[RMDB]
RNA sequence: GGGAACGACUCGAGUAGAGUCGAAAAGGCGACCCGGCUGGCCAGGGCGUUUCCGCUCUACGACGGGCUCGAGGAGUGGAGUCUGGUCGGCCGCUGACGCGGGCCUGUCGUUGGCGCGCAUAAGCGCCUACAAUGCUGGGUUCGCCCAGCAUUGUAGAAAAGAAACAACAACAACAAC
Reactivity to DMS in 0.01 (KOAc 150mM, MgCl2 10mM, bicine 150mM(pH8.5), 24C), signal-to-noise 7, nucleotides 027 to 126: g010g010c020g010a150c050c120c020g000g010c020u000g010g010c040c040a040g010g000g020c100g000u000u020u010c040c000g020c010u000c010u000a200c020g010a030c030g020g000g010c060u000c010g020a300g010g000a030g030u000g010g000a050g010u010c010u000g010g020u000c030g000g000c020c010g020c050u010g010a110c230g000c050g020g000g020c000c000u000g000u010c060g010u010u010g000g020c030g010c000g010c140a080u010a150a100g010c000g000c010
Reactivity to 2A3 in 0.01 (KOAc 150mM, MgCl2 10mM, bicine 150mM(pH8.5), 24C), signal-to-noise 2, nucleotides 027 to 126: g060g000c020g030a080c030c010c000g000g040c000u000g000g020c020c020a030g000g050g040c050g050u050u120u000c010c010g010c000u000c020u040a060c020g020a000c070g130g220g030c090u000c010g040a120g030g020a010g000u030g000g030a040g030u010c030u030g070g010u030c020g030g000c000c000g000c010u030g030a080c030g010c050g040g060g030c000c000u050g040u120c060g080u110u070g040g000c050g000c000g000c060a040u080a230a040g010c010g000c010